[RMDB]
RNA sequence: GGGAACGACUCGAGUAGAGUCGAAAAAUGGAAGAGGCUAAAGCCAGUUACCGAUACAUUAGACCACCGAAAGGUGAUGUGGUAGGGGGGCGUGCUAUAUGGAUAGAAGUUUCUUCGAGAGGAGGGACUCAAGAUAUUUAUUCGUAAAUAUCUUGAGAAAAGAAACAACAACAACAAC
Reactivity to DMS in 0.01 (KOAc 150mM, MgCl2 10mM, bicine 150mM(pH8.5), 24C), signal-to-noise 9, nucleotides 027 to 126: a080u020g000g010a070a050g010a110g000g020c040u010a060a110a140g000c020c020a070g010u010u020a110c030c020g010a130u020a070c090a080u020u020a100g010a130c150c010a020c010c020g010a090a080a100g000g010u010g000a040u010g010u010g010g010u020a080g010g000g010g000g000g000c050g010u010g010c060u000a050u000a090u020g010g010a070u010a070g010a120a100g010u000u000u000c010u000u000c040g010a110g000a100g000g010a040g000g000g010a200
Reactivity to 2A3 in 0.01 (KOAc 150mM, MgCl2 10mM, bicine 150mM(pH8.5), 24C), signal-to-noise 9, nucleotides 027 to 126: a000u120g050g020a060a030g050a050g060g000c060u130a160a040a010g020c020c010a020g060u060u070a100c010c010g010a040u040a110c020a030u070u120a080g090a130c020c020a010c010c020g080a100a040a020g030g010u040g020a050u060g030u040g020g050u060a060g010g020g000g010g020g010c040g020u040g010c020u070a070u050a080u270g080g030a030u040a110g070a090a010g010u010u020u010c000u040u040c040g050a060g000a020g080g020a050g010g020g010a010

This 177-nucleotide RNA was probed chemically with DMS and 2A3. For DMS the reverse transcriptase was MarathonRT. 2A3 adducts were read by reverse transcription with SuperScript II with manganese.